Overview: An RNA of 207 nucleotides, treated with DMS and 2A3 and read out base by base. For 2A3, 4,850 sequencing reads were counted. The DMS profile rests on 2,704 reads. The reactions ran in a buffer of 150 mM KOAc, 10 mM MgCl2 and 150 mM bicine (pH 8.5), at 24 C. Values cover nucleotides 27 to 156.

RNA sequence: GGGAACGACUCGAGUAGAGUCGAAAAGUCCUGCCAUGAGACCGCAACGAGAGCAUGUCGCAUCGAAUGGAUUCGGGGAGUCGGCAGCUUGCCCCACGGAUGAGCGCCUAAUGCCGGCAUUCGGGAAAAUAGACUGGAUAGUUCGCUAUCCAGUCAAGAUGAGAAAGUAGUUCGCUACUUUCUCAUCAAAAGAAACAACAACAACAAC
Reactivity to DMS in 0.01 (KOAc 150mM, MgCl2 10mM, bicine 150mM(pH8.5), 24C), signal-to-noise 1, nucleotides 027 to 156: g000u000c000c010u000g000c020c030a060u000g000a210g020a060c040c100g000c020a110a150c050g010a100g010a110g000c080a070u000g020u000c040g070c020a120u000c010g020a200a130u000g000g030a250u010u000c050g000g020g010g020a060g040u010c000g020g000c020a070g000c050u000u000g000c030c000c030c030a200c060g030g020a040u020g000a080g010c080g030c020c070u020a060a140u000g040c000c030g000g040c020a090u000u000c020g020g000g000a020a070a080a170u000a180g020a000c010u010g010g000a010u000a030g000u000u030c300g000c020u000a010u000c000c000a000g010u000c000a020a080
Reactivity to 2A3 in 0.01 (KOAc 150mM, MgCl2 10mM, bicine 150mM(pH8.5), 24C), signal-to-noise 5, nucleotides 027 to 156: g040u030c010c000u010g040c010c010a070u070g040a030g030a090c070c070g010c050a060a080c090g040a020g020a040g150c060a100u120g040u110c040g000c030a050u030c030g050a040a050u050g010g080a040u040u130c060g010g000g000g010a070g040u050c030g020g000c010a020g020c020u050u080g020c010c000c010c020a040c040g020g010a110u110g020a030g030c020g050c010c040u110a150a050u120g020c030c000g020g000c020a020u040u060c030g000g000g100a010a050a030a100u130a060g000a000c000u000g000g010a000u000a000g010u030u030c120g000c100u000a000u010c000c000a000g000u000c000a000a000